[RMDB]
RNA sequence: GGGAACGACUCGAGUAGAGUCGAAAAGAUAUGGAAGUGAACUACAUUGAUCAACGCGUUGAAAUUAAAGUGUGAUCGGAAACGAUCACACUUUAAUGGAGCGUUGGUUUGAUGCACUUCCUAAGUCCAAUCUAUUUCACUUCGGUGAAAUAGAUUGAAAAGAAACAACAACAACAAC
Reactivity to DMS in 0.01 (KOAc 150mM, MgCl2 10mM, bicine 150mM(pH8.5), 24C), signal-to-noise 6, nucleotides 027 to 126: g000a100u000a300u010g010g000a020a020g020u000g000a110a060c100u020a300c010a010u000u000g020a000u000c000a000a010c000g010c000g000u010u010g010a130a130a010u000u000a000a000a010g020u010g010u000g010a010u000c000g000g010a110a090a230c010g010a010u000c000a000c000a000c000u000u000u000a000a000u000g000g000a110g010c000g010u000u000g000g010u000u000u010g030a010u000g000c010a020c000u000u000c000c000u010a040a080g010u010c030
Reactivity to 2A3 in 0.01 (KOAc 150mM, MgCl2 10mM, bicine 150mM(pH8.5), 24C), signal-to-noise 4, nucleotides 027 to 126: g020a040u090a080u270g000g010a000a010g000u020g020a090a030c070u240a040c300a030u020u070g010a010u020c000a010a000c000g030c030g300u300u080g060a100a120a030u020u000a010a010a000g000u000g000u000g010a010u000c010g000g050a140a090a020c000g000a000u000c000a000c000a000c000u010u000u000a000a000u000g000g000a020g000c000g000u000u000g000g000u030u020u210g010a010u030g010c010a000c010u000u000c000c000u020a130a010g030u020c020
An RNA of 177 nucleotides, treated with DMS and 2A3 and read out base by base. Source: RMDB library TTRINS, as collected in RNAgym. For 2A3 the reverse transcriptase was SuperScript II with manganese.